[RMDB]
RNA sequence: GGGAACGACUCGAGUAGAGUCGAAAAUGGACUUUUUACAGUUCCUACUUAUCCGGUUUUAACGCUGUUUUAUUGGCGCAAAGGUUUACGGAUAAACAACUAAUAAUUACACCUUUUGUGUGCGAAAAUUGGACGUUUAGGUUCGCCUAAACGUCAAGUUGUUUUCUGGAUUCGUCCAGAAAACAACAAAAGAAACAACAACAACAAC
Reactivity to DMS in 0.01 (KOAc 150mM, MgCl2 10mM, bicine 150mM(pH8.5), 24C), signal-to-noise 1, nucleotides 027 to 156: u000g010g000a110c050u000u010u010u000u000a110c090a110g020u010u010c000c030u000a070c180u000u000a010u010c030c010g000g000u000u020u020u010a090a060c000g000c000u010g050u000u000u000u000a100u040u000g010g000c010g020c020a030a100a120g010g020u000u010u000a120c030g000g000a050u010a030a010a100c050a030a130c090u010a020a060u000a040a160u010u010a080c060a130c010c050u000u000u000u000g020u020g050u010g000c000g000a040a060a060a210u010u010g030g000a020c000g060u000u000u000a020g030g010u010u000c300g000c000c000u000a000a000a010c010g000u000c000a000a020
Reactivity to 2A3 in 0.01 (KOAc 150mM, MgCl2 10mM, bicine 150mM(pH8.5), 24C), signal-to-noise 4, nucleotides 027 to 156: u100g030g030a060c030u100u110u110u090u150a130c130a040g000u090u130c000c000u020a080c030u030u020a000u000c000c000g050g030u070u040u050u080a050a010c020g020c020u040g160u070u180u060u200a140u180u160g030g000c010g000c070a050a020a040g030g010u040u090u090a020c000g000g000a000u000a000a080a000c030a020a020c050u130a050a110u060a130a050u150u050a050c010a010c030c010u090u180u170u170g100u050g020u040g070c090g100a030a000a050a090u100u150g110g010a010c000g000u000u000u000a010g010g000u040u030c170g050c060c000u000a000a000a010c000g000u000c000a000a010